[RMDB]
RNA sequence: GGGAACGACUCGAGUAGAGUCGAAAACGAACAAAAAAUGUUCGAUUGCUGUUUGAAAAGUGUCGAGGUCGCUACAGAGUGACGUAAGUGCAAUGUCAUGUUCUUAACGAACGAGACGGGCUAAUGACCUAUAUACGAACUUCGGUUCGUAUAUAGGAAAAGAAACAACAACAACAAC
Reactivity to 2A3 in 0.01 (KOAc 150mM, MgCl2 10mM, bicine 150mM(pH8.5), 24C), signal-to-noise 3, nucleotides 027 to 126: c000g020a010a010c030a010a150a000a120a030a100u130g000u010u010c000g030a060u030u170g040c070u060g010u270u200u140g160a120a080a060a040g140u150g020u050c010g020a040g070g000u010c000g000c010u040a040c050a070g140a010g020u000g000a010c040g050u060a080a050g100u090g210c090a060a080u080g020u010c020a050u070g100u050u010c000u000u050a050a030c010g000a010a000c010g010a020g010a020c020g010g060g010c030u120a220a030u090g030a020
Reactivity to DMS in 0.01 (KOAc 150mM, MgCl2 10mM, bicine 150mM(pH8.5), 24C), signal-to-noise 6, nucleotides 027 to 126: c020g010a010a010c030a000a030a110a090a150a090u010g000u000u000c000g010a140u000u000g010c030u000g020u000u000u010g000a070a070a070a070g010u000g010u000c020g000a270g010g000u000c020g000c010u000a050c190a060g010a210g010u000g000a030c040g000u000a060a070g030u010g020c200a080a040u000g000u000c020a030u000g010u000u000c000u000u000a080a060c120g010a010a010c010g000a180g000a020c020g020g000g010c040u000a070a070u010g000a250